[RMDB]
RNA sequence: GGGAACGACUCGAGUAGAGUCGAAAAGAUAUGGACCUUUCACCAGCUCAACAGCUCGGAAACGAGACAUGAGCGUGACGGAGGUCCUAAGUCAAAACCCAAUACGUGGUUCGCCACGUAUUGGGAAGUUAUUUCGUGAGUUCGCUCACGAAAUAACAAAAGAAACAACAACAACAAC
Reactivity to DMS in 0.01 (KOAc 150mM, MgCl2 10mM, bicine 150mM(pH8.5), 24C), signal-to-noise 4, nucleotides 027 to 126: g000a040u000a300u000g000g010a040c000c000u000u000u000c010a080c070c060a180g020c000u000c000a040a100c240a180g000c020u000c000g000g010a110a080a160c010g010a020g010a010c120a220u000g000a010g010c000g020u010g020a020c300g000g000a010g000g000u000c010c020u000a010a060g000u000c030a050a050a070a100c000c000c000a040a000u000a000c000g000u000g000g000u000u010c260g010c000c000a000c000g020u000a010u000u000g000g000g010a000a020
Reactivity to 2A3 in 0.01 (KOAc 150mM, MgCl2 10mM, bicine 150mM(pH8.5), 24C), signal-to-noise 3, nucleotides 027 to 126: g020a010u080a070u140g000g000a000c010c000u020u100u110c090a080c130c130a050g020c000u020c010a070a240c060a170g040c000u000c000g040g020a090a050a040c010g010a000g030a060c030a170u100g000a000g010c040g040u010g010a070c140g130g030a010g000g010u000c000c000u020a080a000g070u020c030a010a040a110a290c000c000c000a000a000u010a000c010g000u010g020g060u070u080c260g080c070c010a000c010g000u000a000u010u010g000g000g000a000a000